[RMDB]
RNA sequence: GGGAACGACUCGAGUAGAGUCGAAAAGGCGCGGUCACGAUCUCUCGCGGGCCGAUGUCAUCGGCAUCUUGAUGGCCGAGUUCGAGCAGGACCUCGAGGACGAUCGCGGGCUCGAGCGGUCGCGACCGUGACGGCGGUCCGCGGGCAACCGCGGGCAGCUUAGCAGUGAGUUCGCUCACUGCUAAGCAAAAGAAACAACAACAACAAC
Reactivity to 2A3 in 0.01 (KOAc 150mM, MgCl2 10mM, bicine 150mM(pH8.5), 24C), signal-to-noise 2, nucleotides 027 to 156: g090g010c040g000c010g020g000u000c020a010c070g020a030u010c020u000c000u000c010g000c090g040g010g030c020c020g020a080u030g030u020c030a050u070c010g010g000c040a060u080c150u150u180g100a190u280g190g010c010c000g000a000g010u020u080c020g000a010g050c120a210g070g210a210c020c000u020c040g030a020g050g040a040c010g020a060u070c060g010c080g100g020g000c030u040c030g000a000g020c050g000g000u000c010g000c000g000a010c000c000g000u010g010a020c000g040g070c000g000g000u000c020c000g000c000g000g000g000c000a060a040c010c000g010c020g000g010g010c010a010
Record summary:
This 207-nucleotide RNA was probed chemically with 2A3. Reactivities are given for positions 27 through 156. The 2A3 profile rests on 1,297 reads. The reactions ran in a buffer of 150 mM KOAc, 10 mM MgCl2 and 150 mM bicine (pH 8.5), at 24 C.